[RMDB]
RNA sequence: GGGAACGACUCGAGUAGAGUCGAAAAGACCGCCAUUAGGGGAGAUUCAUCCAGCGAUGGCAAAGGCGACCCGUGAGAGAGGCGACUGGGAUGGCACUGUUCUUAGGGUUAACAAGUACAAGUUCGGUUUAUUAUGGACGGUGGAGUCUGGUAUUUCAGGUAGUGAACAGUUCGCUGUUCACUACCUAAAAGAAACAACAACAACAAC
Reactivity to 2A3 in 0.01 (KOAc 150mM, MgCl2 10mM, bicine 150mM(pH8.5), 24C), signal-to-noise 1, nucleotides 027 to 156: g020a030c020c010g010c010c010a000u010u080a130g020g020g080g010a060g040a090u210u150c060a110u100c050c010a050g110c060g080a010u030g050g000c000a090a000a000g050g000c020g000a060c000c010c020g010u060g000a060g000a010g000a010g020g020c060g010a020c080u000g070g000g000a010u000g030g010c010a030c090u110g050u120u030c010u010u080a020g000g010g070u020u030a060a010c020a110a000g010u110a040c020a050a050g010u040u050c020g010g000u080u010u040a160u120u040a040u070g030g030a000c010g060g030u050g010g020a020g000u030c030u090g030g010u090a110u000u130u140c100